[RMDB]
RNA sequence: GGGAACGACUCGAGUAGAGUCGAAAACAGGAGGAUCCUUAGAUGGGGUUUUGAUAAGUACUCCAAGUGGUAUCUGGAUUCACGAUUCCUAGCCCGAGACCACCCCUUGACUCCUUAUAUCAAAACCACUGAUAGGAUAGUUCGCUAUCCUAUCAGUAAAAGAAACAACAACAACAAC
Reactivity to 2A3 in 0.01 (KOAc 150mM, MgCl2 10mM, bicine 150mM(pH8.5), 24C), signal-to-noise 9, nucleotides 027 to 126: c090a010g030g010a030g030g020a080u080c020c020u110u110a080g030a190u170g020g010g000g030u020u020u020u040g110a090u070a140a050g080u050a070c010u000c030c010a040a040g060u070g030g030u050a080u060c040u060g030g010a040u080u090c060a030c160g110a130u100u080c010c020u020a050g020c020c010c010g020a020g010a020c020c020a020c000c010c000c000u020u080g050a050c030u050c020c020u090u120a190u010a020u150c040a040a000a010a010c020c000
Reactivity to DMS in 0.01 (KOAc 150mM, MgCl2 10mM, bicine 150mM(pH8.5), 24C), signal-to-noise 5, nucleotides 027 to 126: c160a120g010g010a040g020g010a050u000c040c020u020u020a080g010a120u010g000g000g010g010u000u000u020u010g010a070u020a050a100g020u010a080c040u010c020c030a080a140g010u010g010g010u020a050u010c050u000g000g000a070u010u010c070a100c190g020a140u010u000c020c010u000a060g010c010c000c010g010a070g020a070c040c020a050c010c020c010c020u020u020g020a090c080u010c030c010u000u020a110u030a060u000c040a030a020a030a050c090c040